[RMDB]
RNA sequence: GGGAACGACUCGAGUAGAGUCGAAAAUGUUGCAGUACCAGAUGGCAUCUUAAAUCCGAUCUGCAAAUAAGCAUGUAGAAAGCUGAUGUGGGCUUUAGCUGGACGGGGGUUCAAUUCCCCCCGGCUCCUACCAUUUAGGAUUCGUCCUAAAUGGUAGAAAAGAAACAACAACAACAAC
Reactivity to DMS in 0.01 (KOAc 150mM, MgCl2 10mM, bicine 150mM(pH8.5), 24C), signal-to-noise 9, nucleotides 027 to 126: u020g010u000u000g010c040a040g010u010a060c050c030a080g010a060u010g010g010c110a080u010c090u010u010a070a100a050u010c020c030g010a090u010c010u000g000c020a030a050a070u020a110a090g010c090a070u010g010u010a090g000a050a060a100g010c040u000g000a080u000g020u010g010g010g010c050u000u010u010a040g010c020u000g010g010a130c120g010g000g000g000g010u020u020c200a080a300u020u020c050c000c000c000c000c020g000g000c050u010c230
Reactivity to 2A3 in 0.01 (KOAc 150mM, MgCl2 10mM, bicine 150mM(pH8.5), 24C), signal-to-noise 9, nucleotides 027 to 126: u180g020u030u050g010c020a020g010u060a080c020c010a020g010a080u060g040g020c050a100u040c100u130u210a110a140a060u030c020c010g040a070u030c010u020g000c010a020a030a060u180a060a040g050c060a040u110g030u100a040g150a130a070a010g010c030u040g030a110u110g090u070g070g020g000c020u050u070u100a030g010c010u030g060g030a080c040g040g000g000g000g000u060u140c030a050a050u070u080c000c000c000c000c000c000g010g000c000u020c010

Source: RMDB libraries RFM100 and RFMREP, as collected in RNAgym. Chemical mapping of a 177-nucleotide RNA with DMS and 2A3. The RNA was probed in 150 mM KOAc, 10 mM MgCl2 and 150 mM bicine (pH 8.5) at 24 C.